Notes:
An RNA of 177 nucleotides, treated with 2A3 and DMS and read out base by base. It was measured as part of the RMDB library M2PK50. For DMS the reverse transcriptase was MarathonRT. Reactivities are given for positions 27 through 126. The RNA was probed in 150 mM KOAc, 10 mM MgCl2 and 150 mM bicine (pH 8.5) at 24 C.

RNA sequence: GGGAACGACUCGAGUAGAGUCGAAAAGUCGCCUCCUUCGGGAGGCGACAAAUACAGAGACUACGCAACUCUGAAAAACACAACAAAAGUGUAAAAGGGUAGAAACAUCCACGUUCGCGUGGAUGAACCAUAAAUGAGUGUUCGCACUCAUUUAUGGAAAAGAAACAACAACAACAAC
Reactivity to 2A3 in 0.01 (KOAc 150mM, MgCl2 10mM, bicine 150mM(pH8.5), 24C), signal-to-noise 3, nucleotides 027 to 126: g010u000c000g000c000c000u020c010c010u040u080c110g080g000g000a000g010g000c000g000a000c000a000a000a000u040a000c000a010g030a000g050a040c030u030a020c120g020c070a070a050c020u000c000u010g020a030a010a010a010a000c040a020c030a150a030c050a020a160a070a010g020u030g020u060a040a080a030a040g100g000g040u100a050g090a050a100a000c000a000u000c000c000a000c000g020u060u070c250g020c010g060u000g000g000a000u010g010a010a030
Reactivity to DMS in 0.01 (KOAc 150mM, MgCl2 10mM, bicine 150mM(pH8.5), 24C), signal-to-noise 4, nucleotides 027 to 126: g020u000c010g010c000c020u000c000c050u000u010c170g010g040g040a000g000g020c000g010a000c010a010a030a040u010a190c040a020g000a040g020a120c050u000a040c070g030c100a110a080c010u000c010u010g010a060a080a060a120a060c040a020c030a070a100c180a070a090a130a120g020u000g010u000a020a060a080a140g000g010g010u000a030g000a220a100a190c010a000u000c000c000a000c000g020u010u000c150g020c020g030u000g010g010a000u000g000a020a100